Source: RMDB library OK3TST, as collected in RNAgym.
The record gives the reactivity of an RNA of 207 nucleotides to 2A3.
For 2A3 the reverse transcriptase was SuperScript II with manganese.
Reactivities are given for positions 27 through 156.

RNA sequence: GGGAACGACUCGAGUAGAGUCGAAAAACUCUAGAUGAUACUCAUUAUGUUCCAAAUAGGGAUGGAAUGACAAUAGAGUGCAUUUAUAGAACACUUAGUCUCAGGUACACCUUUUUAUCCUCAUGACAACACAAUUGAGGUAGGUGCCUAGGUAUAAAGUCAGGGUGAGUUUCGACUCACCCUGACUAAAAGAAACAACAACAACAAC
Reactivity to 2A3 in 0.01 (KOAc 150mM, MgCl2 10mM, bicine 150mM(pH8.5), 24C), signal-to-noise 2, nucleotides 027 to 156: a000c060u010c010u000a000g040a100u000g010a040u050a120c020u000c000a000u030u030a040u240g030u020u050c050c100a000a100a280u230a150g070g060g010a050u030g000g030a020a050u030g100a090c090a060a000u010a070g020a010g000u040g000c000a000u090u070u000a140u120a010g080a090a020c020a000c050u100u090a040g130u060c010u030c140a000g000g080u040a090c000a000c010c000u040u110u060u040u300a070u050c000c000u000c050a060u090g050a140c050a190a020c020a130c010a180a260u060u030g000a000g000g000u000a010g000g000u010g000c000c000u000a000g020g020u060a030u070a220a100